[RMDB]
RNA sequence: GGGAACGACUCGAGUAGAGUCGAAAAGAUAUGGAUAACCCUAUGGAGCUCUCUCGGAAACGAGGAGCUAUGAAGUAGGUUAUCCUAAGUCAAAAGAUACGGGGUCACUUCGGUGACCCCGUAUCAACUUUGUCAUAGUGUUCGCACUAUGACAAAGAAAAGAAACAACAACAACAAC
Reactivity to DMS in 0.01 (KOAc 150mM, MgCl2 10mM, bicine 150mM(pH8.5), 24C), signal-to-noise 1, nucleotides 027 to 126: g000a020u000a300u000g020g000a010u000a000a010c120c130c110u010a060u020g000g030a010g010c000u010c000u020c000u000c000g040g000a050a070a160c010g040a030g000g000a020g010c000u010a010u000g000a110a180g000u000a010g000g000u000u000a000u010c000c000u010a020a100g000u000c040a080a100a150a180g010a020u010a000c000g000g000g000g020u000c020a010c000u000u010c230g040g050u000g000a070c020c010c000c010g000u000a010u000c000a050a090

This 177-nucleotide RNA was probed chemically with DMS. Source: RMDB library TTRDEL, as collected in RNAgym. The reactions ran in a buffer of 150 mM KOAc, 10 mM MgCl2 and 150 mM bicine (pH 8.5), at 24 C. Reactivities are given for positions 27 through 126. For DMS the reverse transcriptase was MarathonRT.